This 177-nucleotide RNA was probed chemically with 2A3 and DMS. Values cover nucleotides 27 to 126. For 2A3, 1,076 sequencing reads were counted.
RNA sequence: GGGAACGACUCGAGUAGAGUCGAAAACAGGAGAACUCUUCAGAGCAAUCAUUCUUGAUCAAUUUUUAAGACUGCGUGAUGGUGAUCGAUUUUGGUUCGAAAAUACUUGGAAUGGGUUCGCUAUCCGACCGAUUACCACGUUCGCGUGGUAAUCGGUAAAAGAAACAACAACAACAAC
Reactivity to 2A3 in 0.01 (KOAc 150mM, MgCl2 10mM, bicine 150mM(pH8.5), 24C), signal-to-noise 3, nucleotides 027 to 126: c090a030g040g000a100g040a090a060c010u020c000u040u000c000a000g010a020g090c070a000a090u030c000a000u020u070c030u070u040g030a040u030c030a100a110u060u000u000u040u300a150a080g030a030c060u030g000c100g100u120g020a030u090g050g040u000g000a010u040c030g030a010u010u060u040u110g110g000u020u010c020g120a030a120a080a030u230a090c070u010u050g090g010a110a060u100g120g030g000u020u010c040g000c060u060a040u030c000c000g000
Reactivity to DMS in 0.01 (KOAc 150mM, MgCl2 10mM, bicine 150mM(pH8.5), 24C), signal-to-noise 1, nucleotides 027 to 126: c100a100g000g000a100g010a070a100c030u000c000u000u000c090a120g000a150g000c150a070a040u040c030a040u050u080c070u000u000g020a090u000c300a000a000u000u070u010u030u030a020a060g030a040c120u040g000c120g000u000g050a190u000g060g030u000g000a000u000c000g000a070u000u000u000u000g000g000u000u000c060g060a060a030a000a070u000a090c100u020u070g000g000a000a030u030g000g000g000u010u000c000g000c140u000a090u300c000c010g030